[RMDB]
RNA sequence: GGGAACGACUCGAGUAGAGUCGAAAAACAAUUUGUUAUAAAUGUUCAAACGGAAAAUGCAACAACGGCAAGACGUAUUUAUUCGUUGAUUAAACGUGUCUUUAAUGUGGAAGUUGAAAUAUUAGUCCAUAUCGCACAUAUUCGUAUGUGCGAUAUGAAAAGAAACAACAACAACAAC
Reactivity to DMS in 0.01 (KOAc 150mM, MgCl2 10mM, bicine 150mM(pH8.5), 24C), signal-to-noise 4, nucleotides 027 to 126: a100c080a080a080u040u010u010g010u010u050a070u040a040a090a090u020g000u000u010c050a050a060a060c050g020g000a040a030a050a070u020g000c060a050a080c050a080a080c090g000g000c170a030a050g010a080c060g020u000a110u000u010u000a090u020u010c010g020u020u020g010a090u020u020a040a020a020c020g000u020g000u010c010u000u000u030a040a130u030g020u000g010g030a030a140g000u000u000g000a040a070a040u030a060u010u010a080g010u000c100
Reactivity to 2A3 in 0.01 (KOAc 150mM, MgCl2 10mM, bicine 150mM(pH8.5), 24C), signal-to-noise 5, nucleotides 027 to 126: a000c060a050a090u060u050u100g090u060u110a190u110a160a150a070u140g040u080u070c040a120a050a030c030g040g040a040a090a010a010u020g070c020a050a020c000a130a000c070g080g000c090a060a020g060a060c050g040u080a040u050u150u040a150u110u100c040g060u040u040g080a120u000u150a030a110a010c020g030u040g040u110c030u060u160u190a110a110u140g060u070g130g040a090a090g060u060u020g020a010a180a000u190a060u090u110a000g040u020c040
Structure probing data (DMS and 2A3) for a 177-nucleotide construct. Reactivities are given for positions 27 through 126. For DMS the reverse transcriptase was MarathonRT. The reactions ran in a buffer of 150 mM KOAc, 10 mM MgCl2 and 150 mM bicine (pH 8.5), at 24 C. It was measured as part of the RMDB library OK1LIB.